[RMDB]
RNA sequence: GGGAACGACUCGAGUAGAGUCGAAAAAGGCGACGAUAUUAUCAACGCCGCCGAAGCGGGGGCCGAUCAAACCAUCAGCGGGGUGGUGACUCGCGCCGCCGCUGGCGAUACGGUCACCGUGACGCUAAUUUACUGGAGUCUUCGGACUCCAGUAAAUAAAAGAAACAACAACAACAAC
Reactivity to DMS in 0.01 (KOAc 150mM, MgCl2 10mM, bicine 150mM(pH8.5), 24C), signal-to-noise 2, nucleotides 027 to 126: a150g030g030c010g000a040c060g000a110u020a150u010u000a180u010c110a120a240c000g000c000c000g000c020c010g000a140a280g000c010g020g020g000g000g020c000c030g000a080u010c050a080a120a200c020c000a020u000c010a030g000c040g000g010g010g100u020g000g000u020g010a140c300u010c020g010c040g000c020c000g000c050c020g010c040u010g020g000c030g000a080u010a060c000g010g020u000c010a010c000c000g060u000g000a090c140g010c110u000a060